[RMDB]
RNA sequence: GGGAACGACUCGAGUAGAGUCGAAAAGUGGUCGAGUCCGAAGGACUGGGGUAGCGAAAUAAAGAGAGAGAGAGCUACCCCGUCGGUCAGUCACUCUCUGUCUGACUCUCUCUCUCAAAGACCACAAAUCAUCAGUAUGCUUCGGCAUACUGAUGAUAAAAGAAACAACAACAACAAC
Reactivity to DMS in 0.01 (KOAc 150mM, MgCl2 10mM, bicine 150mM(pH8.5), 24C), signal-to-noise 3, nucleotides 027 to 126: g010u000g020g000u010c020g010a110g030u050c000c020g010a090a100g020g040a070c070u020g040g010g020g000u000a000g020c010g030a100a060a060u080a020a070a090g040a060g000a000g010a010g010a030g000a160g030c030u000a010c000c010c020c010g020u000c040g010g040u000c020a010g020u010c190a100c290u040c110u010c040u010g000u010c000u000g010a040c010u000c020u000c000u010c000u000c030u020c000a100a090a160g000a030c020c000a010c040a100a090
Reactivity to 2A3 in 0.01 (KOAc 150mM, MgCl2 10mM, bicine 150mM(pH8.5), 24C), signal-to-noise 4, nucleotides 027 to 126: g020u010g000g000u030c030g020a030g050u020c050c040g090a150a100g070g010a020c040u080g000g000g000g010u000a000g000c020g130a090a080a080u280a060a210a010g010a000g000a000g000a000g000a000g000a010g000c000u000a000c000c000c000c000g000u020c000g000g000u010c000a000g000u040c020a050c150u110c030u020c020u040g000u030c000u020g020a030c000u000c000u000c000u000c000u000c000u000c030a020a020a000g010a010c000c010a000c010a040a100
The record gives the reactivity of an RNA of 177 nucleotides to DMS and 2A3. The reactions ran in a buffer of 150 mM KOAc, 10 mM MgCl2 and 150 mM bicine (pH 8.5), at 24 C.